[RMDB]
RNA sequence: GGGAACGACUCGAGUAGAGUCGAAAAGAAUGAAAGUUCACCCGCUAGCGAGGUAUAGAGUUCCUAUGCGUUGAUUGGAUUCGCUAUCCAUAGGAACUUCAUACCGUGCUCUUGGAUGGCUUUCCAAAAUGUAGUGCAAAUUCGUUUGCACUACAUUAAAAGAAACAACAACAACAAC
Reactivity to DMS in 0.01 (KOAc 150mM, MgCl2 10mM, bicine 150mM(pH8.5), 24C), signal-to-noise 9, nucleotides 027 to 126: g010a120a090u030g010a020a020a010g000u010u030c000a040c020c000c000g020c060u000a020g010c000g010a080g000g000u000a000u000a080g010a010g010u000u000c000c000u000a000u000g000c240g010u020u020g000a090u010u020g020g010a170u020u020c120g010c140u010a050u010c100c010a020u000a000g010g000a010a000c000u000u000c060a020u000a010c000c000g000u010g010c010u000c070u000u000g020g020a050u000g000g000c020u000u000u000c010c230a060a060
Reactivity to 2A3 in 0.01 (KOAc 150mM, MgCl2 10mM, bicine 150mM(pH8.5), 24C), signal-to-noise 9, nucleotides 027 to 126: g150a040a140u250g010a020a010a000g030u300u300c010a010c010c000c000g000c020u010a000g000c000g050a040g010g020u000a010u060a080g020a000g010u000u000c000c000u000a010u010g070c120g130u090u100g060a110u060u140g110g090a180u210u130c070g010c120u070a030u020c010c000a000u000a000g000g000a000a000c000u020u020c000a000u000a000c000c000g060u080g000c000u010c010u020u010g000g000a010u010g010g000c000u010u000u000c020c010a010a200